[RMDB]
RNA sequence: GGGAACGACUCGAGUAGAGUCGAAAAGCAUUAAGAGAGUACUCUUAUUCCCACAACGUUGGUGACAACGUUGAUUUUCCGGUGGCCACCCGCCCGGGCCACCGUUACUCCACUCCACUCCUUCGGGACUGGUUUGGAGGAACAAUAAAGGGCUAAAGCCAUUUACUCGAUUCGUCGAGUAAAUGGCAAAAGAAACAACAACAACAAC
Reactivity to 2A3 in 0.01 (KOAc 150mM, MgCl2 10mM, bicine 150mM(pH8.5), 24C), signal-to-noise 1, nucleotides 027 to 156: g020c080a080u060u050a050a000g000a000g040a080g220u150a120c000u000c000u000u010a020u020u040c000c030c000a020c000a000a000c000g010u000u000g020g040u120g060a070c000a000a000c000g010u000u000g030a040u080u040u120u040c070c000g010g000u010g000g000c000c000a040c050c090c020g000c000c010c010g000g000g000c000c000a000c000c010g000u000u090a010c000u000c000c000a030c000u040c000c000a000c020u000c000c010u010u090c170g080g000g000a000c000u000g000g000u000u000u000g000g010a000g000g030a010a010c020a030a000u240a210a070a020g010g000g000c000u000a060a050a000
The record gives the reactivity of an RNA of 207 nucleotides to 2A3. 2A3 adducts were read by reverse transcription with SuperScript II with manganese. The 2A3 profile rests on 883 reads.